Structure probing data (2A3 and DMS) for a 177-nucleotide construct. The reactions ran in a buffer of 150 mM KOAc, 10 mM MgCl2 and 150 mM bicine (pH 8.5), at 24 C. It was measured as part of the RMDB library OK2TST.

RNA sequence: GGGAACGACUCGAGUAGAGUCGAAAAGAGAUGCAGAAAAACGGCGGCCUGAUCACGAAAGAAGAUUUAGCGGCCUAUAAAGCGGUCGAGCGCACACCAAUAAGCGGCGAUUAUCGCGGGUAUCAGGAAUCUUCGGUUUAUUCGUAAACCGAAGAUUAAAAGAAACAACAACAACAAC
Reactivity to 2A3 in 0.01 (KOAc 150mM, MgCl2 10mM, bicine 150mM(pH8.5), 24C), signal-to-noise 1, nucleotides 027 to 126: g060a000g000a020u050g040c030a020g060a060a090a000a010a010c020g020g020c000g020g040c030c020u060g000a030u040c010a010c090g060a080a040a070g120a070a020g000a050u030u110u110a030g030c040g020g040c000c000u080a100u070a070a060a010g020c020g050g000u030c010g000a030g060c020g080c020a010c010a040c060c000a050a050u130a190a010g050c010g060g000c010g010a030u000u070a090u120c000g050c020g050g000g000u030a040u080c020a010g010g140
Reactivity to DMS in 0.01 (KOAc 150mM, MgCl2 10mM, bicine 150mM(pH8.5), 24C), signal-to-noise 3, nucleotides 027 to 126: g020a120g010a030u010g000c020a120g000a050a070a050a080a130c180g000g030c010g010g020c000c030u000g020a030u000c040a110c050g030a100a080a170g000a110a090g000a050u000u000u000a140g010c030g010g040c010c010u000a120u000a050a060a120g000c090g020g010u000c030g000a080g010c030g010c030a060c040a050c090c070a040a110u000a090a090g000c060g000g000c020g010a110u000u000a080u000c060g000c030g000g000g020u000a040u000c030a090g010g000